[RMDB]
RNA sequence: GGGAACGACUCGAGUAGAGUCGAAAAGCAAGCCUCAUGCGCAAGACACGCAGUGCAUGAAACGUUAGAAAGACACGAAGCCCAGUGUAACAACGUGACACUAUCUUAGGAUAGUCGCAGGGCUGCAAUUUAAAUAUAUAUUCGUAUAUAUUUAAAUAAAAGAAACAACAACAACAAC
Reactivity to DMS in 0.01 (KOAc 150mM, MgCl2 10mM, bicine 150mM(pH8.5), 24C), signal-to-noise 4, nucleotides 027 to 126: g020c080a070a110g000c020c010u010c050a030u000g000c000g020c050a100a110g020a190c120a090c120g020c110a140g000u020g000c010a060u000g010a040a120a050c090g000u000u000a070g010a140a080a080g010a060c040a000c020g020a090a090g010c010c010c000a200g010u000g000u000a070a080c110a030a050c020g000u000g010a140c140a040c010u000a000u000c010u000u050a100g020g000a010u010a010g010u000c090g040c120a090g010g000g010c000u000g000c040a080
Reactivity to 2A3 in 0.01 (KOAc 150mM, MgCl2 10mM, bicine 150mM(pH8.5), 24C), signal-to-noise 3, nucleotides 027 to 126: g050c040a070a020g020c000c000u040c000a010u020g000c000g020c060a110a090g120a150c070a030c100g090c100a030g030u020g030c010a010u040g000a130a080a010c010g000u010u010a080g090a190a180a010g110a040c010a000c050g040a040a010g050c000c000c010a020g000u010g030u080a090a060c050a030a010c030g020u030g060a010c010a000c050u000a010u030c020u030u090a060g200g000a000u000a020g010u020c010g030c070a050g020g000g020c000u020g000c000a000